[RMDB]
Structure probing data (2A3) for a 177-nucleotide construct. Source: RMDB library OK1LIB, as collected in RNAgym. 2A3 adducts were read by reverse transcription with SuperScript II with manganese.
RNA sequence: GGGAACGACUCGAGUAGAGUCGAAAAAUAUAGAGCUAGCUGCUCCUAUGUCUCACAUCUGGUACUUCAAAGGUAUACCAAGUAGAAUGGGACUUUUACUUGAUAUGUCACCAAGAUCGUUAGAAAAGCGAUCGCACUAGUUCGCUAGUGCGAUCGCAAAAGAAACAACAACAACAAC
Reactivity to 2A3 in 0.01 (KOAc 150mM, MgCl2 10mM, bicine 150mM(pH8.5), 24C), signal-to-noise 2, nucleotides 027 to 126: a000u270a020u020a030g000a000g020c000u050a030g030c010u050g090c000u100c030c030u030a030u100g150u000c000u000c000a050c000a000u060c030u040g010g000u140a040c080u300u200c150a100a100a050g070g000u000a050u000a030c000c000a000a000g000u000a020g000a080a010u090g000g000g300a120c000u030u000u000u000a000c000u000u010g000a000u000a000u050g000u000c040a000c030c000a120a100g020a000u050c090g170u000u190a160g060a010a100a000a000